Chemical mapping of a 177-nucleotide RNA with DMS and 2A3. 2A3 adducts were read by reverse transcription with SuperScript II with manganese. The reactions ran in a buffer of 150 mM KOAc, 10 mM MgCl2 and 150 mM bicine (pH 8.5), at 24 C. Reactivities are given for positions 27 through 126. Source: RMDB library TTRDEL, as collected in RNAgym.
[RMDB]
RNA sequence: GGGAACGACUCGAGUAGAGUCGAAAAGAUAUGGACGCAGAGUUUCUAUAAUCCGUAACAUCUGUCGGAAACGACAGUGGGGUAGAAACUACUGCGUCCUAAGUCAAAACGGCAGUUCGCUGCCGAAGUCAAACUGAUACUUCGGUAUCAGUUUGACAAAAGAAACAACAACAACAAC
Reactivity to DMS in 0.01 (KOAc 150mM, MgCl2 10mM, bicine 150mM(pH8.5), 24C), signal-to-noise 2, nucleotides 027 to 126: g020a050u000a300u000g000g000a010c000g040c020a010g010a030g000u000u000u000c000u000a080u000a260a110u020c020c020g000u000a080a110c200a050u000c000u010g000u010c000g000g010a150a080a180c020g000a020c000a000g000u000g010g050g050g000u010a000g000a000a000a030c000u000a040c000u000g010c000g000u000c000c000u000a040a070g020u010c050a070a080a120a170c030g000g000c030a010g010u000u000c210g010c000u010g000c000c000g000a020a030
Reactivity to 2A3 in 0.01 (KOAc 150mM, MgCl2 10mM, bicine 150mM(pH8.5), 24C), signal-to-noise 1, nucleotides 027 to 126: g010a000u060a060u170g030g000a000c000g000c000a010g000a000g000u000u000u000c020u000a090u050a000a290u210c000c050g120u130a050a030c000a240u170c000u000g000u010c000g030g060a080a040a020c040g000a000c000a000g030u060g030g010g000g000u000a010g010a000a020a010c020u150a110c000u000g020c010g000u010c010c000u000a000a030g000u010c000a000a000a020a090c010g030g000c000a020g000u000u110c210g150c150u010g000c050c010g000a020a000